Conditions: 150 mM KOAc, 10 mM MgCl2 and 150 mM bicine (pH 8.5), 24 C. The record gives the reactivity of an RNA of 177 nucleotides to 2A3 and DMS. For 2A3, 20,167 sequencing reads were counted. DMS adducts were read by reverse transcription with MarathonRT. For DMS, 6,836 sequencing reads were counted. Reactivities are rounded to 0.1 and cut off at 0 and 3. Values cover nucleotides 27 to 126. It was measured as part of the RMDB library TTRDEL.
[RMDB]
RNA sequence: GGGAACGACUCGAGUAGAGUCGAAAAGAUAUGGACCCUGUCGAACUCUAUGAAGUCGGAAACGAUGGAGAGUGACAUGGGUCCUAAGUCAAACCUCAAUCUUCUAGUUCGCUAGAAGAUUGAGGAACGUUACACCUUAGUUCGCUAAGGUGUAACGAAAAGAAACAACAACAACAAC
Reactivity to 2A3 in 0.01 (KOAc 150mM, MgCl2 10mM, bicine 150mM(pH8.5), 24C), signal-to-noise 7, nucleotides 027 to 126: g030a020u050a050u100g000g000a010c010c010c000u000g000u000c050g220a250a140c010u010c000u030a300u300g030a030a010g020u010c000g040g030a100a040a020c010g000a000u030g020g040a000g000a010g000u040g000a000c020a170u240g000g000g010u000c000c000u010a030a010g010u010c030a080a030a150c000c000u000c000a000a000u000c000u000u000c010u010a020g010u040u070c300g030c170u000a000g000a000a000g000a000u000u000g000a000g000g000a000a000
Reactivity to DMS in 0.01 (KOAc 150mM, MgCl2 10mM, bicine 150mM(pH8.5), 24C), signal-to-noise 5, nucleotides 027 to 126: g000a030u010a300u010g000g000a010c000c000c000u000g000u000c000g010a110a070c000u000c000u000a280u000g010a150a180g000u000c000g000g000a150a100a150c000g010a030u000g000g000a000g010a020g030u000g000a010c020a030u020g010g000g000u010c000c000u000a000a070g000u010c030a110a130a200c000c000u000c000a010a000u000c000u000u000c000u000a000g010u000u010c220g020c000u010a010g000a010a010g000a010u010u000g000a010g000g000a000a020